RNA sequence: GGGAACGACUCGAGUAGAGUCGAAAAUAUGGAGGAGAUUGGGUCUAAAGGCUAAGAAACAAGGCACUCUUCUGGUAGGGGACAACUGACAAGUUAUAAGUCCAUGGCGCCAACAGGUCCGGUUAAGGUAAUAACUGUAGUUCGCUACAGUUAUUACAAAAGAAACAACAACAACAAC
Reactivity to 2A3 in 0.01 (KOAc 150mM, MgCl2 10mM, bicine 150mM(pH8.5), 24C), signal-to-noise 4, nucleotides 027 to 126: u210a080u060g040g020a020g030g020a040g020a070u050u140g050g000g010u020c020u070a100a060a070g050g000c020u090a130a030g070a090a120a010c060a040a030g030g000c010a020c030u050c000u080u050c050u060g070g020u050a040g010g020g020g020a010c020a040a010c050u050g040a030c020a070a020g020u040u070a120u030a210a020g010u000c010c000a020u050g060g000c040g010c030c010a020a020c030a050g040g000u010c010c010g010g000u080u080a060a000g090
Reactivity to DMS in 0.01 (KOAc 150mM, MgCl2 10mM, bicine 150mM(pH8.5), 24C), signal-to-noise 9, nucleotides 027 to 126: u010a080u010g000g010a080g010g010a060g010a110u000u000g010g010g010u000c040u000a070a100a130g010g010c050u000a080a090g010a110a080a080c100a060a080g000g000c060a080c050u000c040u000u000c060u000g010g020u000a070g010g000g000g010a060c080a040a050c050u000g010a100c220a060a060g010u000u010a090u010a070a120g010u000c020c040a100u000g000g010c070g010c030c060a030a060c110a070g010g010u000c020c030g000g000u010u010a070a080g010